[RMDB]
RNA sequence: GGGAACGACUCGAGUAGAGUCGAAAAAACAGAAGAGACUCCCCUCGAUAGGAGCAAGACCAUAGCGAUGGGGGGAGAUGCUAGGAGUCGGAGGAGACCGAAGCGAGGAGGAAAGCAAAGAAAGCAAGGCCCGUUUGGUUCGCCAAACGGAAAAGAAACAACAACAACAAC
Reactivity to DMS in 0.01 (KOAc 150mM, MgCl2 10mM, bicine 150mM(pH8.5), 24C), signal-to-noise 5, nucleotides 027 to 129: a100a070c090a060g000a080a050g030a110g010a230c080u000c010c000c040c010u010c050g040a130u050a060g030g030a120g060c130a100a000g030a000c110c050a090u030a080g000c060g040a060u080g010g000g000g000g000g000a040g030a030u070g040c050u020a130g030g030a000g030u020c020g030g060a040g020g000a090g010a030c020c010g020a090a040g030c220g010a030g000g000a070g030g010a000a000a000g030c240a020a040a070g000a090a050a060g030c060a080a080g000g030c050
Reactivity to 2A3 in 0.01 (KOAc 150mM, MgCl2 10mM, bicine 150mM(pH8.5), 24C), signal-to-noise 3, nucleotides 027 to 129: a030a000c070a020g080a090a010g040a020g040a040c020u050c020c010c000c000u030c030g090a090u130a070g090g030a070g040c050a050a000g070a070c020c010a080u100a050g010c040g050a090u150g000g000g000g020g000g000a010g000a020u000g000c020u000a060g020g020a000g000u060c000g040g010a010g020g000a000g010a030c010c000g010a020a000g020c030g020a000g020g020a020g000g010a010a000a010g000c030a040a050a020g050a040a060a000g040c030a030a020g090g010c010

The record gives the reactivity of an RNA of 170 nucleotides to DMS and 2A3. Conditions: 150 mM KOAc, 10 mM MgCl2 and 150 mM bicine (pH 8.5), 24 C. Values cover nucleotides 27 to 129. The DMS profile rests on 15,609 reads.